[RMDB]
RNA sequence: GGGAACGACUCGAGUAGAGUCGAAAACUAUUAGCACAUGCUUAUCAUACAUUACGUGAUGUGCGUUACCAAGCUGUGCAGGCUGUAGGCAAUGUGUGGUUUCAAACUGCUCAACAUAAAUUAUUCAUAGAGAGCUUAUGUUCGCAUAAGCUCUCUAAAAAGAAACAACAACAACAAC
Reactivity to 2A3 in 0.01 (KOAc 150mM, MgCl2 10mM, bicine 150mM(pH8.5), 24C), signal-to-noise 1, nucleotides 027 to 126: c040u040a070u160u300a010g010c010a000c000a040u200g050c020u000u060a060u040c050a070u080a070c060a130u140u200a010c110g020u120g170a240u050g140u050g110c000g070u100u020a060c070c020a030a010g000c000u000g010u100g070c000a010g070g040c000u080g000u130a050g070g050c040a100a150u020g010u010g010u000g040g200u000u060u120c120a100a090a050c020u060g000c000u000c050a020a030c010a060u240a040a200a030u130u180a180u230u130c000a050
Reactivity to DMS in 0.01 (KOAc 150mM, MgCl2 10mM, bicine 150mM(pH8.5), 24C), signal-to-noise 2, nucleotides 027 to 126: c050u000a100u000u020a110g000c000a030c050a030u010g010c020u020u000a050u000c040a080u000a070c170a090u000u000a080c150g020u000g010a050u000g030u010g030c050g010u010u000a090c190c090a060a050g000c020u000g010u000g000c080a130g000g000c050u000g000u010a040g000g010c040a080a040u000g040u010g030u000g000g010u000u030u000c080a090a080a040c070u010g000c000u000c040a060a080c150a050u000a060a050a060u000u000a090u000u000c090a120

Structure probing data (2A3 and DMS) for a 177-nucleotide construct. The RNA was probed in 150 mM KOAc, 10 mM MgCl2 and 150 mM bicine (pH 8.5) at 24 C.